[RMDB]
RNA sequence: GGGAACGACUCGAGUAGAGUCGAAAAGAACAACAUUGAGAAAGAUCUUAAACGAAAACAACUAUCGAGAUUGGAGAAAGCUUAUUGAGAAGUGGUUCUCAAUCUUCGAAGCUGAUCAAUCCAACGAUCCUCAUUAACAUCGGAGGCCCAAUCAGGACGGUAGGAUUACGUUCGCGUAAUCCUACCGAAAAGAAACAACAACAACAAC
Reactivity to 2A3 in 0.01 (KOAc 150mM, MgCl2 10mM, bicine 150mM(pH8.5), 24C), signal-to-noise 4, nucleotides 027 to 156: g030a010a060c080a020a060c060a110u100u180g040a090g020a160a050a050g020a030u040c020u110u200a110a100a040c110g110a070a120a020a020c040a010a040c030u090a150u230c020g020a020g020a090u010u110g130g020a050g020a020a040a000g010c020u040u090a060u210u300g110a120g060a090a000g010u050g120g240u080u030c010u010c010a030a020u010c020u130u070c040g000a000a040g000c050u020g000a040u020c020a010a060u000c030c030a020a020c080g020a060u030c000c010u050c020a090u090u180a070a050c060a090u170c050g040g000a030g000g000c000c000c000a010a080u100c030a010g070g090a030
Reactivity to DMS in 0.01 (KOAc 150mM, MgCl2 10mM, bicine 150mM(pH8.5), 24C), signal-to-noise 1, nucleotides 027 to 156: g040a140a060c080a010a040c050a110u000u000g010a160g040a080a140a260g010a020u000c020u000u000a080a130a260c110g000a130a100a040a210c020a070a050c050u000a070u000c000g000a110g000a030u000u000g040g070a080g010a020a110a070g000c020u000u000a170u050u000g030a110g000a020a020g010u000g040g000u030u000c010u000c010a000a000u020c010u000u000c030g000a070a010g010c000u000g000a040u000c010a070a300u010c000c000a050a060c050g010a070u000c040c000u000c010a100u000u000a030a100c150a030u000c090g000g000a090g000g000c030c030c060a050a150u000c100a000g010g040a260

Record summary:
Source: RMDB library OK3TST, as collected in RNAgym. Structure probing data (2A3 and DMS) for a 207-nucleotide construct. 2A3 is a SHAPE reagent: it acylates the 2'-hydroxyl of flexible nucleotides of all four kinds. The RNA was probed in 150 mM KOAc, 10 mM MgCl2 and 150 mM bicine (pH 8.5) at 24 C. For DMS the reverse transcriptase was MarathonRT.